Source: RMDB library TTRDEL, as collected in RNAgym. This 177-nucleotide RNA was probed chemically with DMS and 2A3. The RNA was probed in 150 mM KOAc, 10 mM MgCl2 and 150 mM bicine (pH 8.5) at 24 C. DMS adducts were read by reverse transcription with MarathonRT. For DMS, 21,992 sequencing reads were counted.
RNA sequence: GGGAACGACUCGAGUAGAGUCGAAAAGAUAUGGAGGUGGCUUGGACCUACACCGGUCGGAAACGACCGUUGUAGCUAGUGACCUCCUAAGUCAAAAGCUUACUCAUGGUUCGCCAUGAGUAAGCAAUCAAUAAGCAAAGUUCGCUUUGCUUAUUGAAAAAGAAACAACAACAACAAC
Reactivity to DMS in 0.01 (KOAc 150mM, MgCl2 10mM, bicine 150mM(pH8.5), 24C), signal-to-noise 8, nucleotides 027 to 126: g000a030u000a210u000g000g010a020g010g020u000g000g010c010u010u010g030g010a140c300c010u000a000c000a010c040c000g000g000u000c000g010g000a050a050a090c000g010a010c000c000g010u000u000g010u000a000g010c020u000a020g020u000g000a020c000c000u000c000c000u000a000a050g000u000c020a140a090a100a140g000c000u000u000a010c000u000c000a010u000g000g010u000u010c260g020c000c000a000u000g000a010g010u000a000a000g010c000a010a020
Reactivity to 2A3 in 0.01 (KOAc 150mM, MgCl2 10mM, bicine 150mM(pH8.5), 24C), signal-to-noise 6, nucleotides 027 to 126: g000a010u030a020u080g000g000a010g000g020u060g050g030c030u100u210g120g100a300c030c010u000a000c000a010c000c010g000g000u000c000g000g000a040a030a020c010g000a000c000c000g000u000u010g000u000a000g010c000u010a000g000u030g210a010c000c000u000c000c000u000a020a010g020u010c020a030a030a060a180g000c000u010u000a000c000u000c010a000u010g010g100u060u110c300g060c090c010a000u010g020a000g000u000a000a000g000c000a000a000